[RMDB]
RNA sequence: GGGAACGACUCGAGUAGAGUCGAAAAGCAAUCUAUUGUUCAGCGGUGUUCGCCUGCAUUAGCGUUUGCUGCUCGGUCUUCCGGGCAAAGUAUUUCAGCAAUACAUUGAGCAUCAUACCAUAAGCAGACUUAUCCUGUACUUCGGUACAGGAUAAGUAAAAGAAACAACAACAACAAC
Reactivity to 2A3 in 0.01 (KOAc 150mM, MgCl2 10mM, bicine 150mM(pH8.5), 24C), signal-to-noise 4, nucleotides 027 to 126: g010c010a030a050u040c030u140a140u140u160g040u110u110c050a020g020c020g060g010u050g110u170u140c040g040c070c020u030g000c010a030u000u060a040g000c030g060u020u060u050g000c010u000g020c010u020c000g020g040u060c080u250u060c030c010g000g030g010c050a080a060a010g010u020a090u030u060u070c090a030g010c010a020a020u000a070c020a090u030u120g010a010g030c010a020u060c010a040u050a140c050c020a070u050a150a040g080c040a000g060
Reactivity to DMS in 0.01 (KOAc 150mM, MgCl2 10mM, bicine 150mM(pH8.5), 24C), signal-to-noise 4, nucleotides 027 to 126: g010c030a080a080u000c060u010a050u000u010g000u000u000c090a110g020c060g010g010u000g000u010u000c070g030c090c080u000g010c020a030u010u010a080g010c170g010u010u000u010g010c040u000g000c000u000c000g010g010u000c210u020u000c020c010g000g020g020c020a020a010a080g010u010a040u000u000u000c100a080g040c120a050a040u000a000c040a090u010u000g000a070g020c020a050u000c060a080u010a130c050c060a080u010a070a120g020c140a120g010
Source information
Chemical mapping of a 177-nucleotide RNA with 2A3 and DMS. The reactions ran in a buffer of 150 mM KOAc, 10 mM MgCl2 and 150 mM bicine (pH 8.5), at 24 C. The 2A3 profile rests on 4,217 reads. Values cover nucleotides 27 to 126.